[RMDB]
RNA sequence: GGGAACGACUCGAGUAGAGUCGAAAAGCUGGCGCCGGCUGGGCAACGAUCCGAGGGGACUGUCCCUCUCGAGAAUCGGCAAAUGGGGCCCCUCGCUCGUAUCUCCGAGAGGAGACGAGAAGGAGGUAGACAGUAGAGUUCGCUCUACUGAAAAGAAACAACAACAACAAC
Reactivity to 2A3 in 0.01 (KOAc 150mM, MgCl2 10mM, bicine 150mM(pH8.5), 24C), signal-to-noise 9, nucleotides 027 to 129: g000c010u000g010g000c070g090c050c000g010g000c010u040g010g110g030c060a120a060c020g000a010u000c000c000g000a010g010g020g000g020a030c110u180g150u260c030c020c000u020c000u000c000g210a260g020a090a100u020c000g010g010c030a010a020a060u120g010g000g010g000c000c000c000c010u010c010g010c000u010c000g050u110a190u030c010u000c000c010g030a040g000a060g070g010a010g000a010c000g010a000g020a010a100g160g010a010g010g010u030a050g030a060
Reactivity to DMS in 0.01 (KOAc 150mM, MgCl2 10mM, bicine 150mM(pH8.5), 24C), signal-to-noise 9, nucleotides 027 to 129: g030c010u000g030g000c000g030c020c000g010g000c020u010g000g030g020c110a120a090c000g020a040u020c030c000g020a000g020g010g000g020a130c180u050g050u070c140c000c010u010c010u000c010g040a080g000a070a030u010c020g020g010c070a060a030a050u010g000g010g010g030c000c060c010c010u010c030g020c010u010c000g020u010a100u030c010u020c000c000g000a190g020a210g040g010a000g010a000c000g020a040g030a030a060g000g000a010g020g020u030a070g010a200